[RMDB]
RNA sequence: GGGAACGACUCGAGUAGAGUCGAAAACUGUCACCCAGGCUGGAGUGCAGUGGCAUGGUCUCAGCUCACUGCAACCUCUGCCUCUCAGGUUCAAGUGAUUAUCCUGCCUCAGCCUCCCAAGUAGCUACCACAGUAAGACUUUCGAGUCUUACUGUGGAAAAGAAACAACAACAACAAC
Reactivity to 2A3 in 0.01 (KOAc 150mM, MgCl2 10mM, bicine 150mM(pH8.5), 24C), signal-to-noise 2, nucleotides 027 to 126: c030u060g030u080c030a050c070c030c040a040g030g000c040u090g000g010a080g030u130g000c000a010g010u010g020g010c070a150u200g070g060u120c150u070c140a040g020c070u120c050a030c010u030g010c030a000a090c020c030u020c050u040g030c020c000u040c020u050c050a030g000g100u060u060c060a120a060g000u030g050a000u040u140a020u090c010c010u030g010c020c000u020c000a030g040c010c010u030c000c000c000a070a040g060u070a020g050c030u060a070
Reactivity to DMS in 0.01 (KOAc 150mM, MgCl2 10mM, bicine 150mM(pH8.5), 24C), signal-to-noise 3, nucleotides 027 to 126: c040u000g010u000c130a080c030c000c070a090g010g010c020u000g000g010a060g020u010g010c000a020g020u010g000g010c030a070u000g010g000u000c080u000c050a120g000c040u010c010a020c000u010g010c050a030a040c120c020u000c040u000g010c010c020u000c070u000c090a090g020g020u000u000c080a060a070g000u010g010a050u020u000a100u000c020c020u000g000c010c010u000c050a070g000c010c000u000c000c010c030a060a110g000u000a070g000c060u000a140